[RMDB]
About this RNA:
Chemical mapping of a 177-nucleotide RNA with 2A3 and DMS. For 2A3 the reverse transcriptase was SuperScript II with manganese. It was measured as part of the RMDB library OK2TRN. The DMS profile rests on 1,509 reads. The 2A3 profile rests on 1,734 reads.

RNA sequence: GGGAACGACUCGAGUAGAGUCGAAAAAAGUGGCAGCUUUGUCAUCACCAGCAAGCUCUGCUCCUCAUUCGGGGGGAAAGACAGGAAUGGAGGAAAACCGCAGAUUGGAACACCAGAAGAAGCAAGACCAUCGUAGGUAUUUCGAUACCUACGAUGGAAAAGAAACAACAACAACAAC
Reactivity to 2A3 in 0.01 (KOAc 150mM, MgCl2 10mM, bicine 150mM(pH8.5), 24C), signal-to-noise 2, nucleotides 027 to 126: a000a000g040u050g020g000c010a050g000c130u160u130u130g050u080c020a070u050c020a070c070c000a030g020c040a060a010g000c010u000c000u030g010c040u020c000c020u030c010a140u280u150c120g000g000g030g000g000g100a040a110a000g060a010c030a050g110g000a070a070u070g050g040a060g000g000a050a070a020a000c000c030g000c020a000g030a090u000u100g060g030a060a010c010a000c020c010a000g040a050a000g010a040a000g060c020a060a000g000a030
Reactivity to DMS in 0.01 (KOAc 150mM, MgCl2 10mM, bicine 150mM(pH8.5), 24C), signal-to-noise 2, nucleotides 027 to 126: a070a100g040u000g000g020c060a040g030c070u000u000u010g000u020c110a080u000c070a120c040c030a080g000c040a100a120g010c040u020c020u000g000c050u000c020c010u010c040a200u010u010c170g020g000g000g010g010g000a070a040a050g000a070c120a060g000g000a040a050u000g000g030a050g010g000a040a050a130a060c110c040g010c040a020g010a110u000u000g010g010a090a070c120a090c080c040a030g000a080a060g010a050a070g000c080a050a050g000a160